[RMDB]
RNA sequence: GGGAACGACUCGAGUAGAGUCGAAAACAGUAAUAGGACACCUUCUAAAAAAUAGGACACCCCACCUGCCUCAUGUAAUUAAAUGAGUAAAAAUGGUCAGAACAGCAGCUGGCACUUCGUAAGUAUGUACUCAGCACUAGAAUGUGUUUAUUAUUGCAUAACGUAAAACUUUCGAGUUUUACGUUAUAAAAGAAACAACAACAACAAC
Reactivity to DMS in 0.01 (KOAc 150mM, MgCl2 10mM, bicine 150mM(pH8.5), 24C), signal-to-noise 3, nucleotides 027 to 156: c030a090g030u000a060a060u000a060g010g020a060c020a040c020c050u010u000c030u010a010a030a140a080a100a140u000a050g000g020a090c030a030c040c020c000c030a060c040c010u000g000c100c020u000c010a050u010g010u010a110a140u010u000a060a090a060u000g000a050g010u010a010a050a070a080a100u000g000g010u000c040a100g000a070a080c050a110g000c040a100g040c030u010g000g020c030a040c040u000u000c050g010u000a080a110g030u000a050u000g010u000a040c040u000c040a060g010c020a090c100u020a080g010a070a050u010g020u010g010u000u010u000a030u000u000a050u000u000g020c060
Reactivity to 2A3 in 0.01 (KOAc 150mM, MgCl2 10mM, bicine 150mM(pH8.5), 24C), signal-to-noise 4, nucleotides 027 to 156: c020a010g030u060a020a070u020a090g060g040a020c010a010c020c020u010u030c010u110a080a090a070a050a060a040u160a050g020g030a040c010a080c050c020c000c000a020c000c010u040g010c010c000u010c000a020u030g030u110a050a020u080u140a090a200a080u060g020a010g030u080a010a040a050a070a080u110g040g000u040c030a020g030a150a070c010a030g060c000a000g000c010u030g000g010c040a010c040u070u090c040g020u020a040a030g020u030a060u100g050u020a020c020u030c070a010g040c030a020c040u030a010g050a080a040u050g020u000g010u070u050u050a120u080u030a050u000u070g010c030
Annotation
Chemical mapping of a 207-nucleotide RNA with DMS and 2A3. Source: RMDB library OK3TST, as collected in RNAgym. For DMS, 8,128 sequencing reads were counted.